[RMDB]
An RNA of 177 nucleotides, treated with 2A3 and DMS and read out base by base. DMS adducts were read by reverse transcription with MarathonRT. Conditions: 150 mM KOAc, 10 mM MgCl2 and 150 mM bicine (pH 8.5), 24 C.
RNA sequence: GGGAACGACUCGAGUAGAGUCGAAAAAUCGCCAGUAAGGUGACCGGGAAUGACGCAUACAGAAUAAAAGGACGGAACUUACCUUUUGGACCGAUCUUGCGUCGGGAAUCCAACAUAAUGCCGGUACCAUCCUGAGCCUCUUCGGAGGCUCAGGAUGAAAAGAAACAACAACAACAAC
Reactivity to 2A3 in 0.01 (KOAc 150mM, MgCl2 10mM, bicine 150mM(pH8.5), 24C), signal-to-noise 2, nucleotides 027 to 126: a000u220c020g090c030c000a030g190u160a060a060g000g060u060g060a100c000c000g000g000g050a060a070u210g000a000c010g000c010a000u030a060c000a170g110a100a000u200a120a010a070a070g030g000a020c040g190g080a150a070c000u120u140a110c030c000u080u080u010u100g010g030a060c010c020g020a070u000c040u060u080g000c000g000u000c020g000g000g010a020a000u010c000c000a000a000c000a300u270a040a040u060g000c000c020g000g000u040a020c050
Reactivity to DMS in 0.01 (KOAc 150mM, MgCl2 10mM, bicine 150mM(pH8.5), 24C), signal-to-noise 2, nucleotides 027 to 126: a050u000c000g010c010c000a090g010u030a080a100g000g070u020g070a040c030c010g020g030g000a130a000u030g000a000c000g080c000a000u000a140c300a150g000a070a160u080a050a030a050a040g000g000a120c060g000g000a180a030c040u000u000a100c000c060u010u010u010u010g000g030a300c000c000g000a110u030c060u000u000g000c040g010u000c000g030g000g000a220a130u070c070c020a030a040c300a190u000a020a050u000g000c000c000g000g000u000a050c190